[RMDB]
RNA sequence: GGGAACGACUCGAGUAGAGUCGAAAAGACCCCACUUCAGCGGAGUCCGCGUUCCAUCCUUUCUUACCUGAUGGCCGGCAUGGUCCCAGCCUCCUCGCUGGCGCCGGCUGGGCAACAUUCCGAGGGGCUAUUAGGGCAGGUUCGCCUGCCCUAAUAGAAAAGAAACAACAACAACAAC
Reactivity to DMS in 0.01 (KOAc 150mM, MgCl2 10mM, bicine 150mM(pH8.5), 24C), signal-to-noise 1, nucleotides 027 to 126: g030a250c090c020c000c050a170c080u000u000c110a020g030c090g000g000a080g000u020c030c040g030c070g010u000u000c020c030a100u020c060c030u000u000u010c040u010u010a120c100c060u000g010a090u000g010g030c050c010g000g010c040a140u010g010g000u020c270c010c010a000g010c010c070u010c010c050u000c080g000c020u000g030g000c240g000c010c000g000g030c000u010g000g010g000c080a110a110c090a060u010u010c050c010g000a070g010g000g000g000

The record gives the reactivity of an RNA of 177 nucleotides to DMS. The data come from the RNA Mapping Database (RMDB), library VIROID. The reactions ran in a buffer of 150 mM KOAc, 10 mM MgCl2 and 150 mM bicine (pH 8.5), at 24 C.